[RMDB]
RNA sequence: GGGAACGACUCGAGUAGAGUCGAAAAGGUGUACUCACUGUUCUUACUGUCAAAUGCACUGUAACAUCCAUGUUAAUUUGAUACAUGCUCUUGGAUUUGAAUUCUUGUUCAACUGUCUCCGUUCUUUCUAUAUAAUUCGCCACUGGUCCCAUCCUGACAGUAGGGGAUUAUUCGUAAUCCCCUACUGAAAAGAAACAACAACAACAAC
Reactivity to 2A3 in 0.01 (KOAc 150mM, MgCl2 10mM, bicine 150mM(pH8.5), 24C), signal-to-noise 7, nucleotides 027 to 156: g020g000u030g020u080a070c050u060c080a050c030u040g060u100u050c040u050u110a060c030u060g040u060c020a030a030a100u080g020c030a010c060u030g030u110a110a050c020a090u030c040c000a040u070g030u050u130a170a150u140u060u070g050a040u050a070c050a050u060g020c010u010c010u080u050g030g020a060u040u000u120g060a070a070u110u070c030u080u140g040u040u050c020a080a040c050u040g030u040c020u010c060c020g020u060u010c010u030u100u010c040u010a060u000a030u010a200a170u100u090c030g020c030c020a030c030u010g020g010u010c000c010c010a030u050c010c020u010g030a010
Reactivity to DMS in 0.01 (KOAc 150mM, MgCl2 10mM, bicine 150mM(pH8.5), 24C), signal-to-noise 3, nucleotides 027 to 156: g020g000u000g040u000a070c040u000c020a070c050u010g010u000u000c030u000u000a090c050u000g020u000c030a040a060a090u000g020c030a040c050u000g030u010a090a100c070a080u010c050c050a060u000g020u000u000a060a150u000u010u010g000a210u000a050c040a080u000g000c040u000c050u000u000g000g010a120u000u000u010g000a070a090u010u000c040u000u000g030u000u000c030a040a100c060u010g000u000c020u000c040c040g000u000u000c040u010u000u010c050u010a090u000a100u000a070a190u000u010c030g000c020c020a060c050u010g010g010u000c030c020c030a130u000c020c010u010g010a300